The data come from the RNA Mapping Database (RMDB), library OK2TST. The record gives the reactivity of an RNA of 177 nucleotides to DMS and 2A3. The reactions ran in a buffer of 150 mM KOAc, 10 mM MgCl2 and 150 mM bicine (pH 8.5), at 24 C. Values cover nucleotides 27 to 126. For DMS the reverse transcriptase was MarathonRT. The DMS profile rests on 20,088 reads.
RNA sequence: GGGAACGACUCGAGUAGAGUCGAAAAUGCUUUCAGGUUCUCCGCGAGGGUCUUCCUGAUCGCGAGACAAUAAUAAUCAUUCUCAUUCGCACUUGUCCAACACUUUUUGCAAAAAAAUGCAUUUGAAAAAUGCAUUACUAUUCGUAGUAAUGCAUUUAAAAGAAACAACAACAACAAC
Reactivity to DMS in 0.01 (KOAc 150mM, MgCl2 10mM, bicine 150mM(pH8.5), 24C), signal-to-noise 9, nucleotides 027 to 126: u010g010c040u000u000u000c030a050g020g010u000u000c030u010c030c030g020c200g010a170g010g000g010u000c070u000u000c010c000u000g010a040u000c060g010c030g010a110g000a070c100a080a070u010a090a090u010a090a100u010c080a110u000u000c020u000c020a160u000u000c080g010c050a060c080u000u000g010u000c020c040a060a080c090a070c080u000u000u000u000u000g020c040a000a010a030a090a060a090a130u000g010c020a050u000u000u000g000a030a090
Reactivity to 2A3 in 0.01 (KOAc 150mM, MgCl2 10mM, bicine 150mM(pH8.5), 24C), signal-to-noise 9, nucleotides 027 to 126: u060g000c010u020u020u040c030a010g040g010u070u030c050u010c020c030g050c030g070a150g030g020g000u030c060u140u070c010c010u020g020a050u010c020g010c020g030a020g020a020c070a030a070u190a140a040u100a050a070u100c030a050u080u020c020u010c020a080u120u070c040g010c020a030c030u030u040g020u030c020c010a090a030c020a080c070u060u070u040u110u110g000c020a030a030a020a030a020a110a150u080g000c010a070u030u060u190g150a180a160